[RMDB]
RNA sequence: GGGAACGACUCGAGUAGAGUCGAAAAGAUAUGGAGGUCCAGUAGGGAGCUGACACGUCGGAAACGACGUGCAGCAUCGAUCUACGGACCUCCUAAGUCAAACUCUGUGGACUUCGGUCCACAGAGACAGCUUUGUAUCGUUCGCGAUACAAAGCUGAAAAGAAACAACAACAACAAC
Reactivity to DMS in 0.01 (KOAc 150mM, MgCl2 10mM, bicine 150mM(pH8.5), 24C), signal-to-noise 2, nucleotides 027 to 126: g010a040u010a260u010g000g000a010g020g000u000c000c000a100g020u000a010g010g000g040a160g080c000u000g000a170c000a020c000g040u000c000g010g000a030a020a110c000g000a020c000g020u000g020c000a000g010c000a070u000c220g000a080u000c010u000a000c010g010g020a010c020c000u000c000c000u000a010a050g000u000c020a160a120a230c000u000c000u010g020u000g040g000a030c000u000u000c240g030g000u000c000c000a000c000a000g000a020g010a140
Reactivity to 2A3 in 0.01 (KOAc 150mM, MgCl2 10mM, bicine 150mM(pH8.5), 24C), signal-to-noise 1, nucleotides 027 to 126: g030a010u060a000u070g000g000a000g000g010u010c030c100a030g010u030a020g030g070g110a230g020c000u000g070a220c000a000c010g000u020c000g000g000a020a020a020c010g000a010c010g000u000g030c000a000g000c000a010u120c130g070a220u000c000u000a000c000g000g000a000c000c000u030c000c000u000a000a000g000u020c020a000a010a060c000u020c000u020g000u000g000g000a010c000u050u150c300g160g000u040c000c000a020c010a010g010a010g000a010

Structure probing data (DMS and 2A3) for a 177-nucleotide construct. The DMS profile rests on 2,046 reads. For 2A3 the reverse transcriptase was SuperScript II with manganese. Conditions: 150 mM KOAc, 10 mM MgCl2 and 150 mM bicine (pH 8.5), 24 C.